Chemical mapping of a 207-nucleotide RNA with 2A3 and DMS. It was measured as part of the RMDB library RNAMAK. The reactions ran in a buffer of 150 mM KOAc, 10 mM MgCl2 and 150 mM bicine (pH 8.5), at 24 C.
RNA sequence: GGGAACGACUCGAGUAGAGUCGAAAACUGCAUUUCGAUGCAGCAAAAGCGUACUACGAGGCUCAAGAGAGCCAACAGCUAUACGGGUCCCAAAUAGGACAUGUAUAGACAUGGCUCUCGAAGGCCUCGUAUCGCGAAGUGAGGUAUUCGUACCUAAUAAGUUAUGAUUUUUCGAAAUCAUAACUUAAAAAGAAACAACAACAACAAC
Reactivity to 2A3 in 0.01 (KOAc 150mM, MgCl2 10mM, bicine 150mM(pH8.5), 24C), signal-to-noise 4, nucleotides 027 to 156: c000u000g020c000a010u070u090u240c240g130a030u010g000c010a000g040c030a060a010a040a050g020c010g030u090a060c040u010a010c040g010a000g010g000c020u040c140a060a000g000a000g010a010g020c000c010a030a020c040a010g030c000u010a000u000a000c050g080g000g010u040c020c040c020a140a210a120u280a110g000g000a010c000a010u020g010u010a010u000a000g030a030c020a050u040g000g000c000u010c000u000c000g010a000a000g000g010c000c000u000c000g010u000a000u000c000g000c010g000a020a000g260u200g120a080g040g020u040a110u070u180c230g060u080a040c020c000u060a110a130
Reactivity to DMS in 0.01 (KOAc 150mM, MgCl2 10mM, bicine 150mM(pH8.5), 24C), signal-to-noise 6, nucleotides 027 to 156: c010u000g000c010a040u000u000u000c240g010a060u000g030c000a000g010c020a030a070a120a270g020c010g030u010a090c120u000a010c000g010a090g020g020c000u000c010a050a300g000a050g010a020g010c000c000a010a040c120a170g010c010u000a000u000a010c010g020g010g040u000c000c000c020a060a140a210u010a070g000g010a020c010a060u000g020u000a020u000a020g000a050c050a300u000g010g000c010u000c010u000c000g000a160a090g000g020c010c010u000c000g000u000a000u000c020g020c010g000a080a160g010u000g010a050g010g020u000a070u000u010c150g010u000a070c030c010u000a100a190